[RMDB]
RNA sequence: GGGAACGACUCGAGUAGAGUCGAAAACAGCCGGCACCACAGGGCCAGCCAGCUCCGCAGCGGCAGCCGACGCCGGUGCCGAUGCCGGCAGAGGGCGCGGCGCAGGCCGUCAGCCGGCAGCCGACCCAGUUGAACGGAUUUUCGAAUCCGUUCAACUAAAAGAAACAACAACAACAAC
Reactivity to DMS in 0.01 (KOAc 150mM, MgCl2 10mM, bicine 150mM(pH8.5), 24C), signal-to-noise 2, nucleotides 027 to 126: c050a150g000c020c020g010g000c010a090c160c100a140c150a130g000g010g000c010c030a130g020c000c060a080g030c020u000c030c120g010c070a100g020c020g020g000c020a220g010c000c010g020a150c120g000c100c050g030g020u010g010c050c050g000a080u000g000c070c010g000g010c030a000g000a210g020g030g000c000g030c030g000g010c030g000c100a080g000g000c000c040g000u010c080a070g000c030c020g010g010c020a040g010c030c050g020a220c000c010c010

Chemical mapping of a 177-nucleotide RNA with DMS. Reactivities are given for positions 27 through 126. The DMS profile rests on 1,148 reads. The RNA was probed in 150 mM KOAc, 10 mM MgCl2 and 150 mM bicine (pH 8.5) at 24 C. For DMS the reverse transcriptase was MarathonRT.